[RMDB]
RNA sequence: GGGAACGACUCGAGUAGAGUCGAAAAGAUAUGGACUGUGAUACCAGAACUACAGACAACGUCGGAAACGACGUAGUCUGCUGGUGGAGUCCUAAGUCAAAGUUCCGUAUGUUCGCAUACGGAACAACUUAAUUAUUUCGUUCGCGAAAUAAUUAAGAAAAGAAACAACAACAACAAC
Reactivity to 2A3 in 0.01 (KOAc 150mM, MgCl2 10mM, bicine 150mM(pH8.5), 24C), signal-to-noise 7, nucleotides 027 to 126: g030a010u070a040u140g020g000a010c020u060g060u120g300a060u100a070c010c010a000g020a140a140c250u300a060c150a000g000a000c010a020a010c030g000u000c000g030g000a050a060a050c010g000a000c000g000u010a010g000u000c000u020g030c010u000g000g000u020g000g050a010g000u010c000c000u010a110a030g030u030c060a210a070a100g000u000u000c000c000g000u000a000u000g050u010u080c300g000c160a000u000a000c000g000g000a000a000c000a000a000
Reactivity to DMS in 0.01 (KOAc 150mM, MgCl2 10mM, bicine 150mM(pH8.5), 24C), signal-to-noise 9, nucleotides 027 to 126: g010a050u000a300u000g010g010a010c000u000g010u010g010a190u010a020c000c000a020g000a110a050c110u010a300c000a000g010a000c000a080a010c000g010u000c000g010g000a080a080a180c010g010a010c000g030u000a020g010u000c000u000g010c010u000g000g000u000g000g000a020g010u000c010c000u000a030a080g000u010c040a080a100a120g000u000u000c000c000g010u000a000u000g010u000u020c220g020c000a010u000a000c000g000g000a000a000c000a030a080